This 177-nucleotide RNA was probed chemically with DMS and 2A3.
For DMS the reverse transcriptase was MarathonRT.
[RMDB]
RNA sequence: GGGAACGACUCGAGUAGAGUCGAAAAGGGAGGAAUGGAUUUUUAUGUGCCCAGACAAGAGUCAAUGUUCAGAUGGAUGAGGUUCUCAGAUCUAAGCACAUGGGAGGGCGAUCGCAAUCUGGCUCCCCCCCUAAUUCUAGUUCGCUAGAAUUAGGGGAAAAGAAACAACAACAACAAC
Reactivity to DMS in 0.01 (KOAc 150mM, MgCl2 10mM, bicine 150mM(pH8.5), 24C), signal-to-noise 5, nucleotides 027 to 126: g010g000g010a100g000g000a080a090u000g010g000a050u000u000u010u000u010a050u020g020u000g000c030c030c060a070g010a060c060a120a080g010a020g010u000c040a060a100u010g010u000u000c060a150g020a150u010g020g010a060u010g000a200g010g000u010u000c020u000c070a090g010a080u000c030u000a080a120g000c040a010c050a040u010g010g010g010a100g000g000g020c120g010a050u010c100g030c110a070a070u010c060u000g010g010c050u000c010c030c020
Reactivity to 2A3 in 0.01 (KOAc 150mM, MgCl2 10mM, bicine 150mM(pH8.5), 24C), signal-to-noise 4, nucleotides 027 to 126: g020g020g020a040g020g050a070a100u110g000g040a080u040u070u010u060u130a080u100g040u060g010c030c000c000a010g020a040c030a050a050g020a010g070u040c030a040a090u130g040u040u070c030a030g040a290u140g120g040a050u060g050a040g060g050u120u040c020u010c010a150g010a210u000c030u060a070a010g020c030a020c020a060u050g000g010g040a130g040g040g010c030g020a030u070c020g000c060a040a050u030c020u030g060g000c010u010c010c000c000